[RMDB]
RNA sequence: GGGAACGACUCGAGUAGAGUCGAAAAGACUACCAAUAAGCCUGUAUUUGACUUAGUGAGCCGUAGUGUGAUUAGAACUCACACUAGUUACCACUCGGCAAGUCAGGAAUACUUAGCCGGUAGAGAAGAUAUUGAGUAAUUUCGAUUGUUCGAUAUCAAAAGAAACAACAACAACAAC
Reactivity to 2A3 in 0.01 (KOAc 150mM, MgCl2 10mM, bicine 150mM(pH8.5), 24C), signal-to-noise 9, nucleotides 027 to 126: g040a020c000u010a010c000c000a020a090u040a020a010g060c000c000u080g120u150a130u010u010u020g180a300c000u010u010a000g000u010g060a030g060c080c050g130u020a000g000u000g000u000g010a010u030u070a050g070a110a040c020u000c010a000c000a000c000u000a000g010u010u110a050c020c000a000c000u000c000g010g000c000a000a000g000u000c000a000g030g000a040a050u180a120c010u030u020a010g070c090c060g020g000u010a010g010a010g020a100a010
Reactivity to DMS in 0.01 (KOAc 150mM, MgCl2 10mM, bicine 150mM(pH8.5), 24C), signal-to-noise 9, nucleotides 027 to 126: g010a200c010u000a010c000c000a100a140u010a030a030g010c010c020u000g000u050a010u000u000u000g000a110c000u000u000a020g010u000g010a070g010c300c300g010u020a010g010u000g010u000g000a010u010u020a130g000a140a170c300u000c010a010c010a000c000u000a020g010u020u030a220c100c010a020c000u000c080g000g000c000a010a000g000u010c000a010g000g010a250a060u020a290c030u000u000a020g000c180c140g000g010u000a010g000a130g000a090a090